Chemical mapping of a 207-nucleotide RNA with 2A3 and DMS. The reactions ran in a buffer of 150 mM KOAc, 10 mM MgCl2 and 150 mM bicine (pH 8.5), at 24 C. The data come from the RNA Mapping Database (RMDB), library OK3TST.

RNA sequence: GGGAACGACUCGAGUAGAGUCGAAAACGCGCAUGCGGUUAUACGGCAUCGUAUAUAUGACGCAUGUCAGUCAUGGUGCCGCGAUAUACGCACACAUGCGUGCUAACGUUGGUCGACGCGUUGGUGUUAGCCAUAACCAUAAUAUCGCGACUAUGUAUACUCGUACGUUAUUCGUAACGUACGAGUAAAAAGAAACAACAACAACAAC
Reactivity to 2A3 in 0.01 (KOAc 150mM, MgCl2 10mM, bicine 150mM(pH8.5), 24C), signal-to-noise 4, nucleotides 027 to 156: c030g000c000g000c000a000u020g010c020g030g000u030u040a040u000a020c020g040g040c080a100u080c070g060u030a040u010a020u000a040u170g080a020c010g020c170a080u280g090u150c060a020g040u000c010a030u060g000g030u020g040c020c000g010c020g000a010u010a000u010a050c070g020c030a020c000a010c010a110u050g010c010g010u010g000c010u060a090a010c020g050u050u090g060g010u070c030g030a130c020g030c010g050u020u040g030g010u060g040u070u070a040g040c030c030a080u110a090a050c040c020a010u050a180a030u050a130u100c010g000c000g020a020c010u050a050u090g120u020a080
Reactivity to DMS in 0.01 (KOAc 150mM, MgCl2 10mM, bicine 150mM(pH8.5), 24C), signal-to-noise 3, nucleotides 027 to 156: c030g020c030g030c010a020u000g030c000g000g000u010u000a040u000a040c000g000g020c120a050u010c030g030u000a110u000a100u000a080u000g030a050c030g020c130a120u000g030u000c050a130g030u000c080a070u010g010g010u000g010c000c010g030c000g000a110u000a060u000a080c090g040c080a250c050a040c030a070u000g000c000g000u000g000c010u000a080a060c070g020u010u000g010g000u010c040g040a110c040g030c060g020u000u020g020g040u000g020u000u010a130g020c030c060a100u000a090a080c040c060a090u010a090a110u000a110u000c050g040c030g000a130c040u000a080u000g020u000a280